[RMDB]
RNA sequence: GGGAACGACUCGAGUAGAGUCGAAAAACAUAAUGGGUAGUAGAUUCUGGGUGUCACGGUCUCUACUAUCUAUUAUGAGCACUACAUGUAGACUAGACUGUGAUACCCAGAGUCUACAUGUGGUGUAGGAUCUGGAUGUAUUCGUACAUUCAGAUCCAAAAGAAACAACAACAACAAC
Reactivity to 2A3 in 0.01 (KOAc 150mM, MgCl2 10mM, bicine 150mM(pH8.5), 24C), signal-to-noise 6, nucleotides 027 to 126: a010c030a030u150a060a070u140g060g030g020u050a050g000u000a000g010a000u000u000c000u000g000g000g010u000g010u010c010a010c010g000g000u000c010u010c000u010a030c010u020a030u000c010u010a010u050u060a020u060g020a020g030c060a020c050u110a010c010a030u030g000u000a000g010a020c040u020a020g010a010c000u000g000u010g010a020u010a000c000c000c000a000g000a000g000u000c000u000a000c000a000u010g000u020g000g040u030g020u050a050
Reactivity to DMS in 0.01 (KOAc 150mM, MgCl2 10mM, bicine 150mM(pH8.5), 24C), signal-to-noise 6, nucleotides 027 to 126: a080c050a040u030a070a040u020g010g000g010u010a080g020u010a000g010a010u000u000c000u000g010g000g000u000g010u000c010a000c010g010g000u000c010u000c150u000a040c150u030a080u010c020u010a010u020u050a030u010g000a090g000c180a060c170u040a060c060a020u010g020u000a000g000a100c250u010a050g000a090c000u000g000u010g000a000u000a000c010c010c000a010g000a000g000u000c000u000a000c000a030u010g000u000g010g010u000g010u010a150